[RMDB]
RNA sequence: GGGAACGACUCGAGUAGAGUCGAAAAACCCUCUCACAAAGCAUGAAGAUAUAGAAUACCAGAAUGUAUUCUGGGUCUACUUACAGUAUAUAGAAAAACUGUAUAAAGACCUUACAGGACACAUGCUAGCGUGACUGCUUCGGCAGUCACAAAAGAAACAACAACAACAAC
Reactivity to 2A3 in 0.01 (KOAc 150mM, MgCl2 10mM, bicine 150mM(pH8.5), 24C), signal-to-noise 4, nucleotides 027 to 129: a000c000c030c000u000c000u030c000a090c040a060a080a000g020c000a010u010g130a240a020g110a040u070a010u030a140g030a000a000u010a010c000c050a090g120a300a070u080g040u010a000u000u000c010u040g000g000g000u020c010u030a120c070u010u010a000c000a020g020u030a010u030a030u070a110g260a070a120a010a000a000c000u020g050u030a000u030a020a110a030g000a010c000c010u000u060a030c040a050g000g080a000c000a020c000a040u010g000c020u000a050g030c020
Reactivity to DMS in 0.01 (KOAc 150mM, MgCl2 10mM, bicine 150mM(pH8.5), 24C), signal-to-noise 3, nucleotides 027 to 129: a020c030c000c000u040c040u020c080a090c070a120a260a020g020c040a040u020g020a150a030g040a160u040a090u090a040g010a060a070u020a030c030c300a070g010a200a050u090g030u030a020u000u010c000u010g000g000g000u020c020u020a000c150u070u000a040c000a050g030u040a030u040a300u000a160g050a120a030a070a090a000c000u010g010u000a000u000a010a070a010g000a030c000c040u010u030a120c240a100g000g000a000c300a090c020a050u060g000c000u070a040g020c170